[RMDB]
RNA sequence: GGGAACGACUCGAGUAGAGUCGAAAAGCUCUUGCCAUCCUCUCGGUAACACGGAUUGGCCUAAACCUAAGGGGGAUCACCAAGGGCUGGAUGAUGAGCACCGAGUGGCUUAGAGACGACCUAGCACAUGGAACAAAGCCUUCGGGCUUUGUUCCAUAAAAGAAACAACAACAACAAC
Reactivity to 2A3 in 0.01 (KOAc 150mM, MgCl2 10mM, bicine 150mM(pH8.5), 24C), signal-to-noise 2, nucleotides 027 to 126: g000c000u000c000u020u020g000c000c000a030u110c000c060u060c020u000c000g020g000u100a070a030c110a050c140g190g030a090u100u180g270g100c020c000u100a110a090a060c020c030u100a150a160g110g050g000g000g050a030u090c000a050c300c020a030a030g000g000g000c010u000g000g000a000u050g020a030u030g000a000g030c030a070c110c000g000a000g050u190g000g000c000u040u040a010g000a000g000a110c080g040a030c000c010u000a020g040c100a120c000
Reactivity to DMS in 0.01 (KOAc 150mM, MgCl2 10mM, bicine 150mM(pH8.5), 24C), signal-to-noise 1, nucleotides 027 to 126: g000c000u000c000u000u000g000c090c300a100u010c110c070u000c000u000c030g000g020u010a070a110c080a050c130g020g000a300u000u060g040g040c000c020u000a000a270a050c030c000u020a060a110g000g040g000g030g000a070u000c130a010c300c030a170a060g040g000g000c030u010g000g040a120u020g090a230u000g000a110g000c070a060c000c010g030a000g000u000g000g020c050u000u000a000g000a070g060a070c040g000a010c060c040u010a110g000c090a060c110

The record gives the reactivity of an RNA of 177 nucleotides to 2A3 and DMS. DMS adducts were read by reverse transcription with MarathonRT. The reactions ran in a buffer of 150 mM KOAc, 10 mM MgCl2 and 150 mM bicine (pH 8.5), at 24 C. The 2A3 profile rests on 619 reads. It was measured as part of the RMDB library OK1LIB. For DMS, 902 sequencing reads were counted.